[RMDB]
RNA sequence: GGGAACGACUCGAGUAGAGUCGAAAAGGCACAGGGAUGAACUUGCGACUAUGCUUAAGCUCUCCCAUUGUCUGAUUCACAGAUACGAGCUUGGGUUCGCAUAGUGGUUCAUCUCAAUGGGAGUGCAGCUGUGCUGACUAUUCGUAGUCAGCACAGCAAAAGAAACAACAACAACAAC
Reactivity to 2A3 in 0.01 (KOAc 150mM, MgCl2 10mM, bicine 150mM(pH8.5), 24C), signal-to-noise 1, nucleotides 027 to 126: g080g000c000a000c000a000g030g000g010a010u000g000a020a000c000u030u090g020c010g020a010c050u080a030u170g050c030u030u040a000a000g030c000u020c000u000c010c030c010a050u000u030g010u000c000u010g040a080u100u220c110a070c000a020g000a010u040a000c030g000a000g000c000u030u010g090g010g040u050u120c050g010c030a010u050a040g110u050g040g020u060u000c010a020u030c000u000c000a000a030u030g020g000g020a070g010u020g000c000a010
Reactivity to DMS in 0.01 (KOAc 150mM, MgCl2 10mM, bicine 150mM(pH8.5), 24C), signal-to-noise 1, nucleotides 027 to 126: g020g010c010a020c010a110g000g000g000a010u000g010a020a010c020u000u010g000c070g000a080c300u000a060u000g000c000u000u000a030a080g000c020u000c000u000c040c060c030a110u020u010g000u000c010u000g010a170u000u000c220a120c020a040g050a020u000a000c140g000a010g020c030u000u000g000g010g000u000u000c090g000c030a110u020a070g000u000g000g000u000u000c000a000u000c000u000c010a030a050u000g000g000g000a030g020u010g000c010a050